[RMDB]
RNA sequence: GGGAACGACUCGAGUAGAGUCGAAAAGGACUCUAGUCCUUGGCUGGACUGUAGAAGGUGAGAGGCGAGUCACCCUCCUCACAGACCUCUGCUUGGAGUAUUUAGGAUGACUGCUGUGAAAUGGAGACUCUGAACUCCAGUUCGCUGGAGUUCAGAGAAAAGAAACAACAACAACAAC
Reactivity to DMS in 0.01 (KOAc 150mM, MgCl2 10mM, bicine 150mM(pH8.5), 24C), signal-to-noise 2, nucleotides 027 to 126: g000g000a010c030u000c110u030a110g000u000c000c010u010u000g000g030c080u000g000g000a070c040u000g020u010a090g000a150a090g010g000u010g010a060g020a160g010g000c050g020a040g010u000c050a110c050c020c010u000c030c010u010c030a050c110a100g000a140c080c090u000c030u000g030c050u000u010g010g010a050g030u000a080u000u010u000a120g000g010a070u000g020a080c070u000g010c080u000g020u000g000a040a100a060u000g000g000a100g020a170
Reactivity to 2A3 in 0.01 (KOAc 150mM, MgCl2 10mM, bicine 150mM(pH8.5), 24C), signal-to-noise 1, nucleotides 027 to 126: g020g020a010c020u090c080u170a070g010u000c040c000u000u050g150g000c170u040g030g040a020c000u150g010u150a060g040a150a000g080g000u070g030a260g010a000g020g010c040g010a040g090u040c010a060c000c000c010u040c000c000u060c000a070c010a090g060a070c000c020u020c040u010g050c040u060u050g050g090a090g080u120a160u090u120u160a100g030g000a050u060g020a050c000u040g000c020u010g020u000g090a050a040a040u080g050g020a050g010a040